[RMDB]
RNA sequence: GGGAACGACUCGAGUAGAGUCGAAAAUUCGGUCGCCGCGGAUCACUGGCGUCCAGCGGAGAAACAGGAGCUCGUCUCCCUCCUUUCGCUGCUGGCUCCACAUCCGAUCGUCGCUGAAGCGCCACGCGCAUCUCUCUAGGUUCGCCUAGAGAGAUGCAAAAGAAACAACAACAACAAC
Reactivity to DMS in 0.01 (KOAc 150mM, MgCl2 10mM, bicine 150mM(pH8.5), 24C), signal-to-noise 2, nucleotides 027 to 126: u000u000c010g010g000u000c010g020c040c020g020c030g000g010a010u000c030a050c050u000g010g010c060g000u010c010c000a010g010c010g010g000a020g000a020a020a040c220a060g000g000a010g000c030u020c280g030u020c020u000c010c030c030u000c190c150u000u010u000c000g000c020u000g000c020u000g000g000c020u000c010c010a010c110a010u000c020c010g010a030u010c020g010u000c030g020c010u000g000a020a060g000c100g000c020c020a090c210g030c180
Reactivity to 2A3 in 0.01 (KOAc 150mM, MgCl2 10mM, bicine 150mM(pH8.5), 24C), signal-to-noise 3, nucleotides 027 to 126: u020u010c020g010g030u260c030g000c030c010g020c000g000g010a010u010c000a010c070u010g020g000c030g080u100c000c000a000g000c000g040g010a030g000a050a040a030c160a080g000g030a000g000c060u090c240g260u020c160u020c020c000c000u060c020c000u020u020u010c030g000c020u020g000c000u020g000g020c000u000c000c030a060c040a030u020c010c010g030a260u050c010g020u010c020g000c010u010g020a030a010g010c040g060c040c000a100c050g060c020